Overview
Chemical mapping of a 177-nucleotide RNA with DMS and 2A3.
[RMDB]
RNA sequence: GGGAACGACUCGAGUAGAGUCGAAAAACAAAAGGCGGCAAGAUACGCCGAGGCGUAUGCGGAACCAGACUUGAGAAAGCGAGCGCGAUUGUUGAUGCUCGACCAGGCGUUCGAUCUUCCGGUCAGCCACUACGCUUCAUUUCGAUGAAGCGUAGUGAAAAGAAACAACAACAACAAC
Reactivity to DMS in 0.01 (KOAc 150mM, MgCl2 10mM, bicine 150mM(pH8.5), 24C), signal-to-noise 3, nucleotides 027 to 126: a080c070a050a100a080a100g010g020c050g020g010c070a120a100g010a100u000a020c040g020c010c030g000a090g020g010c000g000u000a020u010g010c070g010g020a080a100c050c060a090g010a050c060u010u010g000a080g000a070a060a090g010c010g000a030g010c000g020c050g000a140u000u010g000u010u010g020a070u010g000c120u020c050g000a030c050c110a060g010g020c150g000u000u010c070g000a070u010c060u000u000c040c030g010g010u000c040a140g000c120
Reactivity to 2A3 in 0.01 (KOAc 150mM, MgCl2 10mM, bicine 150mM(pH8.5), 24C), signal-to-noise 1, nucleotides 027 to 126: a000c060a000a140a010a030g060g000c040g020g000c100a090a010g020a150u060a090c010g010c000c020g000a080g000g030c030g010u080a020u120g150c000g000g050a050a000c030c030a060g070a050c000u110u130g020a100g080a210a090a010g000c010g000a010g000c030g000c030g240a300u010u140g050u040u030g050a100u130g060c070u050c080g000a000c000c030a030g000g040c000g010u010u070c010g060a130u060c020u020u000c030c000g000g000u010c020a000g020c040

2A3 adducts were read by reverse transcription with SuperScript II with manganese. The data come from the RNA Mapping Database (RMDB), library OK2TRN. Reactivities are given for positions 27 through 126. For DMS the reverse transcriptase was MarathonRT.